[RMDB]
Chemical mapping of a 207-nucleotide RNA with 2A3 and DMS. The RNA was probed in 150 mM KOAc, 10 mM MgCl2 and 150 mM bicine (pH 8.5) at 24 C.
RNA sequence: GGGAACGACUCGAGUAGAGUCGAAAAGAUGGAACCAACAUAAAGAGAAAUGCAGACGAUAUAACCAGUAAUGACCAUGGUGAAGAUAAAGAUAUUCAUGAACAGAACAGUAAGAAGCCUGUUAUGGUCUAUAUCCAUGGGGGAUCUUACAUGGAGAGACCUUUUAUGCAUUCGUGCAUAAAAGGUCAAAAGAAACAACAACAACAAC
Reactivity to 2A3 in 0.01 (KOAc 150mM, MgCl2 10mM, bicine 150mM(pH8.5), 24C), signal-to-noise 2, nucleotides 027 to 156: g030a020u060g000g010a020a020c010c000a000a060c020a070u200a070a160a000g030a000g000a000a090a050u110g030c050a030g010a030c040g050a040u040a020u030a180a030c010c000a000g050u100a090a050u090g050a010c020c000a000u020g000g040u020g050a040a040g000a090u120a040a140a030g100a030u080a130u120u160c050a020u090g040a040a020c020a030g030a040a000c020a020g040u120a120a030g080a130a000g170c030c000u010g020u120u020a030u030g010g000u000c010u020a070u020a000u180c000c000a000u010g010g010g000g010g000a000u030c020u030u020a010c000a040u020g000g030a030g000a010
Reactivity to DMS in 0.01 (KOAc 150mM, MgCl2 10mM, bicine 150mM(pH8.5), 24C), signal-to-noise 1, nucleotides 027 to 156: g010a120u020g020g000a110a100c040c060a010a150c060a080u000a050a110a080g020a140g020a020a090a020u000g010c070a080g020a030c050g000a060u020a120u000a130a140c040c020a080g050u000a120a070u000g000a050c060c040a020u010g000g060u000g020a090a050g010a100u000a110a020a130g010a140u000a060u000u050c120a080u030g030a080a070c020a060g040a040a050c000a030g070u080a100a140g020a090a140g000c200c020u000g000u000u000a020u000g020g020u000c030u000a110u010a110u010c000c020a040u000g030g000g000g010g030a170u010c090u000u000a030c000a000u000g000g000a150g030a160

It was measured as part of the RMDB library OK3TST.